[RMDB]
RNA sequence: GGGAACGACUCGAGUAGAGUCGAAAAAUAUUGGUGUCUACAUUAGUAUGUCACUUGUAUUAGUCAUUGUAGUGAAGAGAUUGUACAACCCAUCACUUUCUAACUUUGCGUUAGCAUUGUGCAGUGGCCAUGGUGAUAUGUUCGCAUAUCACCAUGGAAAAGAAACAACAACAACAAC
Reactivity to 2A3 in 0.01 (KOAc 150mM, MgCl2 10mM, bicine 150mM(pH8.5), 24C), signal-to-noise 4, nucleotides 027 to 126: a020u060a040u030u050g020g000u020g020u000c010u010a010c010a080u110u060a100g060u010a030u260g060u020c000a010c000u050u000g010u020a060u050u080a040g050u010c040a040u030u040g030u040a070g020u020g090a050a030g060a020g010a050u070u090g030u070a040c020a050a070c010c000c000a030u050c010a010c000u040u070u000c030u020a050a060c020u040u090u150g000c040g060u030u070a020g000c010a020u010u030g000u010g000c010a030g040u050g070g000
Reactivity to DMS in 0.01 (KOAc 150mM, MgCl2 10mM, bicine 150mM(pH8.5), 24C), signal-to-noise 4, nucleotides 027 to 126: a010u000a010u000u000g010g020u000g010u000c020u000a020c030a210u010u010a100g010u010a010u020g020u010c010a020c010u000u010g010u000a020u000u000a090g010u000c060a060u000u010g010u000a040g010u000g010a040a080g000a110g000a080u000u010g000u000a060c130a060a090c040c010c020a140u010c020a030c020u000u000u010c040u000a070a050c010u000u000u020g020c110g020u010u010a040g010c070a030u000u000g000u010g010c210a040g010u000g000g010
The data come from the RNA Mapping Database (RMDB), library 15KREP.
This 177-nucleotide RNA was probed chemically with 2A3 and DMS.
For DMS the reverse transcriptase was MarathonRT.